[RMDB]
RNA sequence: GGGAACGACUCGAGUAGAGUCGAAAACAAACCCGCCAAUCGGGAGCACAUCAAAAUUGUUCACGUCGUGCUCCCCGCAACGACCUGAAGAAAGUUGAGAGACGUGAACAAGCAAAGGCGGGAAUAAACUACGGGUAGCUUUCGAGCUACCCGUAGUAAAAGAAACAACAACAACAAC
Reactivity to DMS in 0.01 (KOAc 150mM, MgCl2 10mM, bicine 150mM(pH8.5), 24C), signal-to-noise 2, nucleotides 027 to 126: c050a090a140a140c000c000c000g020c030c000a170a020u090c200g020g000g000a010g040c000a200c170a140u020c290a080a010a110a190u000u010g000u000u000c000a000c050g010u010c050g000u000g000c040u010c000c000c000c130g000c040a040a020c000g010a220c250c100u000g000a070a200g000a090a030a220g000u000u000g030a160g000a060g020a030c000g130u000g000a010a020c000a080a040g000c250a070a090a150g000g000c000g020g020g000a100a090u020a030a060
Reactivity to 2A3 in 0.01 (KOAc 150mM, MgCl2 10mM, bicine 150mM(pH8.5), 24C), signal-to-noise 2, nucleotides 027 to 126: c000a000a020a010c000c000c000g000c010c010a060a100u170c030g020g030g010a010g000c000a010c030a150u300c140a020a080a030a070u030u070g000u000u000c000a000c000g000u000c040g000u060g000c000u020c000c000c000c000g020c000a010a000c040g080a060c020c060u100g020a060a050g060a080a280a000g030u030u060g010a060g000a010g000a130c000g000u000g010a000a000c020a000a000g110c030a090a070a000g010g000c000g020g050g010a020a000u050a000a070
Conditions: 150 mM KOAc, 10 mM MgCl2 and 150 mM bicine (pH 8.5), 24 C.
Structure probing data (DMS and 2A3) for a 177-nucleotide construct.
The 2A3 profile rests on 1,761 reads.
As a SHAPE reagent, 2A3 marks flexible, mostly unpaired nucleotides at the ribose 2'-OH.
Source: RMDB library OK1LIB, as collected in RNAgym.
Reactivities are given for positions 27 through 126.